[RMDB]
RNA sequence: GGGAACGACUCGAGUAGAGUCGAAAAGAUAUGGAUGGAAUCCCGAUCGUUGAGGACAUGACGGAGAAGGGUCGGAAACGACCCGUAACGUCAACAGCCUCACCGAUCGGGAUUCCAUCCUAAGUCACUCAUUCAAGUUGUUCGCAACUUGAAUGAGAAAAGAAACAACAACAACAAC
Reactivity to DMS in 0.01 (KOAc 150mM, MgCl2 10mM, bicine 150mM(pH8.5), 24C), signal-to-noise 1, nucleotides 027 to 126: g000a020u000a300u010g000g000a020u010g000g000a000a000u000c000c000c020g000a050u000c010g010u000u020g030a020g010g000a060c160a220u000g000a030c040g010g000a110g000a150a300g010g000g020u000c000g000g000a130a080a190c020g000a010c000c000c000g000u020a060a300c000g000u000c010a060a100c260a150g000c010c000u010c000a020c040c000g000a020u000c020g020g010g010a000u000u000c020c020a000u010c000c000u010a000a060g000u010c060a300
Chemical mapping of a 177-nucleotide RNA with DMS. The reactions ran in a buffer of 150 mM KOAc, 10 mM MgCl2 and 150 mM bicine (pH 8.5), at 24 C. For DMS, 1,127 sequencing reads were counted. Reactivities are rounded to 0.1 and cut off at 0 and 3. It was measured as part of the RMDB library TTRINS.